[RMDB]
Structure probing data (2A3 and DMS) for a 177-nucleotide construct. For DMS, 2,265 sequencing reads were counted. The reactions ran in a buffer of 150 mM KOAc, 10 mM MgCl2 and 150 mM bicine (pH 8.5), at 24 C.

RNA sequence: GGGAACGACUCGAGUAGAGUCGAAAAUGAGCUUUUAUUUCUUGAUGGAGUAUUUCAGAGAAAUGUCCCUCCAAGACGACAAGGACAGCUGAGUCAAUUUUACCGUUAUUCGUCGAUUACUGUAUAACACCAAGGGUGUGUUCGCACACCCUUGGUGAAAAGAAACAACAACAACAAC
Reactivity to 2A3 in 0.01 (KOAc 150mM, MgCl2 10mM, bicine 150mM(pH8.5), 24C), signal-to-noise 2, nucleotides 027 to 126: u180g000a000g050c000u020u010u080u160a060u010u080u010c030u020u110g150a060u070g040g100a160g090u190a280u100u060u060c050a000g030a000g010a030a020a020u060g000u030c000c010c000u010c010c000a060a040g080a020c050g010a020c040a050a000g110g010a040c030a080g020c030u040g030a000g030u080c000a040a090u000u010u000u090a080c000c020g040u020u160a040u140u090c030g000u000c000g030a030u070u100a100c010u050g030u040a140u000a180a040
Reactivity to DMS in 0.01 (KOAc 150mM, MgCl2 10mM, bicine 150mM(pH8.5), 24C), signal-to-noise 2, nucleotides 027 to 126: u050g000a170g030c120u000u030u000u020a010u010u000u000c000u000u000g000a180u050g030g000a030g000u060a030u010u000u000c010a120g010a030g030a020a020a010u000g000u000c000c000c000u010c120c170a050a090g000a010c050g000a010c130a000a130g010g000a000c070a090g000c070u020g000a080g000u030c010a050a060u030u000u010u000a090c070c170g000u000u000a090u010u000c000g030u000c010g000a100u010u000a120c090u000g000u010a030u040a040a220
As a SHAPE reagent, 2A3 marks flexible, mostly unpaired nucleotides at the ribose 2'-OH.